An RNA of 207 nucleotides, treated with 2A3 and DMS and read out base by base. The DMS profile rests on 2,372 reads. For 2A3 the reverse transcriptase was SuperScript II with manganese.
[RMDB]
RNA sequence: GGGAACGACUCGAGUAGAGUCGAAAACAUCCUCUUCGGAGGAUGAAAAAUCCUAAGUCGAAACGAGAGACGAUAAGAGCAUCGAUCAUUCGGAAACGAAUGGGAGCUCUAUCGUGGAAUGUUUCGAUAUGGAAAAAAACCUCGAUUCGUCGAGGAACAAUAUGCCCUGGUUCGCCAGGGCAUAUUGAAAAGAAACAACAACAACAAC
Reactivity to 2A3 in 0.01 (KOAc 150mM, MgCl2 10mM, bicine 150mM(pH8.5), 24C), signal-to-noise 3, nucleotides 027 to 156: c000a000u000c000c010u010c020u020u020c120g190g000a000g010g000a000u020g010a010a010a010a020a010u040c010c000u060a180a030g010u010c000g000a000a000a000c020g020a040g000a010g030a300c020g010a010u030a230a120g010a000g010c030a220u270c040g070a080u060c000a000u020u000c000g070g010a090a060a090c000g000a000a000u000g010g000g000a020g020c000u040c000u000a000u000c000g000u000g000g080a090a040u110g000u000u000u000c000g000a000u000a050u050g030g060a030a100a010a010a030a020a040c010c000u010c000g010a010u090u040c150g040u000c010g130a000g000g040a010a000
Reactivity to DMS in 0.01 (KOAc 150mM, MgCl2 10mM, bicine 150mM(pH8.5), 24C), signal-to-noise 1, nucleotides 027 to 156: c030a040u000c000c010u000c000u000u020c230g060g000a000g010g000a000u010g000a000a050a110a080a090u000c010c000u000a100a190g070u010c030g000a020a020a030c030g030a270g030a300g000a090c020g040a050u000a030a080g010a030g050c000a270u000c110g000a110u000c020a070u000u000c000g000g010a250a110a210c050g000a010a000u010g000g050g000a110g020c010u000c010u000a010u000c000g020u020g010g000a160a130u000g000u010u000u000c000g000a000u000a280u020g000g000a000a000a110a110a090a170a140c000c000u000c000g030a060u000u000c190g050u000c020g020a030g020g000a000a060